Background: An RNA of 177 nucleotides, treated with DMS and 2A3 and read out base by base. The RNA was probed in 150 mM KOAc, 10 mM MgCl2 and 150 mM bicine (pH 8.5) at 24 C. For 2A3, 2,114 sequencing reads were counted. The DMS profile rests on 1,276 reads. DMS adducts were read by reverse transcription with MarathonRT.

[RMDB]
RNA sequence: GGGAACGACUCGAGUAGAGUCGAAAAUGCACGUAAUUUGCCCACCAAACCCACGCAGCCGGUCUUGCGCGCGGUUGUCAUCACCGCCGAUGACGAGGGACUCGAGUUCGCUGGUUUUGAUUACGAACCCCACGUAAUCAUUCGUGAUUACGUGGGGAAAAGAAACAACAACAACAAC
Reactivity to DMS in 0.01 (KOAc 150mM, MgCl2 10mM, bicine 150mM(pH8.5), 24C), signal-to-noise 2, nucleotides 027 to 126: u020g010c130a110c020g010u020a020a050u000u000u010g010c000c000c030a140c150c020a020a010a070c040c010c010a010c220g010c040a060g030c020c010g000g000u000c020u020u030g000c050g020c130g040c000g010g030u000u000g010u010c190a080u000c170a060c080c050g020c040c060g010a060u020g030a070c050g000a090g000g010g020a010c020u000c040g020a110g020u010u000c090g020c030u000g000g010u000u050u000u000g000a140u000u000a020c010g000a120a190
Reactivity to 2A3 in 0.01 (KOAc 150mM, MgCl2 10mM, bicine 150mM(pH8.5), 24C), signal-to-noise 2, nucleotides 027 to 126: u050g010c040a020c090g000u000a000a010u030u080u300g120c020c010c000a040c010c010a020a030a020c020c000c000a020c150g020c010a010g010c000c020g000g020u010c010u030u070g020c000g000c000g000c020g010g030u030u060g070u120c090a100u140c050a060c030c010g000c010c000g160a180u090g070a110c030g020a030g030g010g020a020c010u020c130g080a140g080u040u030c090g000c000u010g000g000u000u020u000u040g000a000u000u060a010c030g020a070a080